[RMDB]
RNA sequence: GGGAACGACUCGAGUAGAGUCGAAAACGUUGAGCCGCUCGCCGGUGCCCAGCCCCAGAAACACCCGUCCGGGGUUCAGGAUCGCCAGCGAGGCAAACGCCUGAGCGACGGUGGCCGGAUGGUAGCGCACCUACUAAGGUUUCGACCUUAGUAGGUGAAAAGAAACAACAACAACAAC
Reactivity to 2A3 in 0.01 (KOAc 150mM, MgCl2 10mM, bicine 150mM(pH8.5), 24C), signal-to-noise 4, nucleotides 027 to 126: c050g010u030u130g030a040g040c050c020g020c050u050c030g010c030c010g020g020u020g080c030c010c000a020g000c000c000c000c000a000g070a030a070a010c090a080c020c020c010g050u020c000c020g000g000g030g000u050u050c060a040g010g070a160u060c020g010c010c000a060g010c060g070a050g070g000c020a090a130a010c100g040c020c020u080g020a060g020c030g030a050c020g010g100u040g040g020c010c000g000g030a100u110g070g050u100a030g030c030g010
Reactivity to DMS in 0.01 (KOAc 150mM, MgCl2 10mM, bicine 150mM(pH8.5), 24C), signal-to-noise 4, nucleotides 027 to 126: c110g000u010u010g000a110g020c080c030g000c020u010c060g010c010c020g000g000u010g030c130c020c070a100g000c010c020c000c020a030g020a060a090a100c130a150c080c020c010g000u000c000c000g050g010g000g010u010u020c060a090g030g010a150u020c070g000c020c010a140g010c070g010a120g000g000c080a090a100a080c070g000c020c020u000g010a160g010c030g010a040c070g000g020u000g000g000c020c010g000g000a040u020g000g020u020a030g030c110g000